[RMDB]
RNA sequence: GGGAACGACUCGAGUAGAGUCGAAAAAGCAGCAGCGUCGUGUUGGAACCAAAAACAAAGUCCAAAAAGGCAACGGCGUAGCUCGACGUCGUCACAAGCGAGCUGCCCGCCACCAGUAUCUGGGAGAGCGUAUAGGGGAGUUCGCUCCCCUAUACGCAAAAGAAACAACAACAACAAC
Reactivity to 2A3 in 0.01 (KOAc 150mM, MgCl2 10mM, bicine 150mM(pH8.5), 24C), signal-to-noise 1, nucleotides 027 to 126: a000g030c010a020g000c050a000g000c020g120u020c000g010u040g130u080u060g000g040a070a100c000c040a070a110a110a020a040c080a080a060a020g030u040c000c000a070a010a010a000a100g050g000c050a070a010c010g030g000c060g020u040a020g000c010u000c050g010a050c000g020u120c010g030u000c060a050c010a160a000g020c000g000a000g020c000u010g020c030c030c020g020c020c030a070c010c000a030g060u110a090u180c100u080g060g080g020a200g020a000
Reactivity to DMS in 0.01 (KOAc 150mM, MgCl2 10mM, bicine 150mM(pH8.5), 24C), signal-to-noise 2, nucleotides 027 to 126: a010g000c030a120g000c030a080g020c020g010u000c020g030u000g000u000u020g000g010a050a110c070c140a040a080a100a080a110c210a070a070a140g010u010c010c060a040a050a090a170a130g000g000c110a030a090c020g020g000c060g020u000a110g030c090u000c050g000a050c040g000u000c050g000u020c100a060c170a130a100g000c030g000a040g000c010u000g020c000c040c040g010c040c020a070c050c010a080g020u010a040u020c120u000g000g000g010a060g000a080